[RMDB]
RNA sequence: GGGAACGACUCGAGUAGAGUCGAAAAUGGUUUCGACGGGGGCAUUGAAGUUCGAGACGCGUGCCGAGCUUGUCAGGUAGCUCGUAAAUUCAACCCGGCAAAGACACAAAAGCCAACGACAACGUUGAGCUCGCGCUGGCUGCCUAAAAACAGCCCACCAUAAUGCAUCGUUCGCGAUGCAUUAUGGAAAAGAAACAACAACAACAAC
Reactivity to DMS in 0.01 (KOAc 150mM, MgCl2 10mM, bicine 150mM(pH8.5), 24C), signal-to-noise 1, nucleotides 027 to 156: u000g040g000u010u000u010c010g010a120c020g000g000g040g070g090c030a050u040u010g010a060a130g040u000u000c030g000a150g000a020c070g010c070g030u000g050c090c020g010a110g010c070u000u010g030u000c040a050g000g080u000a130g050c000u000c030g010u000a010a020a070u000u000c100a090a120c050c000c040g000g000c030a190a080a120g000a130c060a090c040a120a140a090a020g030c010c000a000a030c000g020a110c210a100a040c020g050u010u000g010a100g040c100u000c030g010c160g050c100u000g000g000c000u000g000c010c010u010a050a020a030a020a130c010a000g000c000c000c040a200
Reactivity to 2A3 in 0.01 (KOAc 150mM, MgCl2 10mM, bicine 150mM(pH8.5), 24C), signal-to-noise 2, nucleotides 027 to 156: u060g030g000u020u030u040c020g000a000c040g010g040g000g000g000c010a030u010u120g040a070a020g050u020u060c040g010a030g020a030c060g000c040g070u060g010c010c010g000a010g020c020u070u030g040u100c010a010g040g000u020a020g000c000u010c010g050u090a000a030a030u120u090c000a000a020c000c000c000g000g020c030a100a080a020g100a060c060a000c020a130a090a000a040g000c030c010a000a000c030g110a070c020a240a070c100g050u010u010g030a080g050c000u020c010g040c020g020c090u020g000g000c010u000g010c020c010u060a040a030a000a000a000c020a000g020c010c010c000a040
Structure probing data (DMS and 2A3) for a 207-nucleotide construct. For 2A3 the reverse transcriptase was SuperScript II with manganese. The data come from the RNA Mapping Database (RMDB), library ARCHII. For 2A3, 1,533 sequencing reads were counted.